The data come from the RNA Mapping Database (RMDB), library OK2TST. Chemical mapping of a 177-nucleotide RNA with 2A3 and DMS. For DMS, 918 sequencing reads were counted. The reactions ran in a buffer of 150 mM KOAc, 10 mM MgCl2 and 150 mM bicine (pH 8.5), at 24 C.
[RMDB]
RNA sequence: GGGAACGACUCGAGUAGAGUCGAAAAAUGUAUCAGGAACCAUCAAUCGACUAUUCCGAGCAAAUGCUACGUUAUCCGGCUGAUGCUGAAAACGAUGCUACUAUUCGUCAAGAUGGUCGAAUUAUCAAUCAGGAUGGACUUUCGAGUCCAUCCUGAUAAAAGAAACAACAACAACAAC
Reactivity to 2A3 in 0.01 (KOAc 150mM, MgCl2 10mM, bicine 150mM(pH8.5), 24C), signal-to-noise 1, nucleotides 027 to 126: a010u080g030u050a070u080c080a070g070g110a050a050c070c010a040u100c030a010a170u010c000g030a010c020u040a010u150u000c070c000g000a000g000c070a000a030a050u150g000c000u040a070c040g010u010u030a060u120c060c000g030g000c030u090g090a100u290g000c010u000g020a050a040a000a000c000g060a050u040g020c010u010a070c050u120a060u060u020c030g030u060c030a120a010g040a020u010g000g000u000c010g010a000a020u140u030a080u090c090a010
Reactivity to DMS in 0.01 (KOAc 150mM, MgCl2 10mM, bicine 150mM(pH8.5), 24C), signal-to-noise 2, nucleotides 027 to 126: a070u000g000u010a090u030c150a090g010g000a060a170c060c060a060u000c120a090a210u000c060g020a020c020u000a070u000u000c020c010g010a120g030c100a050a100a070u010g010c000u000a220c090g010u000u000a090u000c080c020g010g000c000u000g000a130u000g020c000u000g000a000a000a000a040c020g020a300u000g010c060u020a090c090u000a020u000u020c060g000u020c060a130a140g000a020u000g000g000u020c000g010a040a090u000u000a110u010c200a050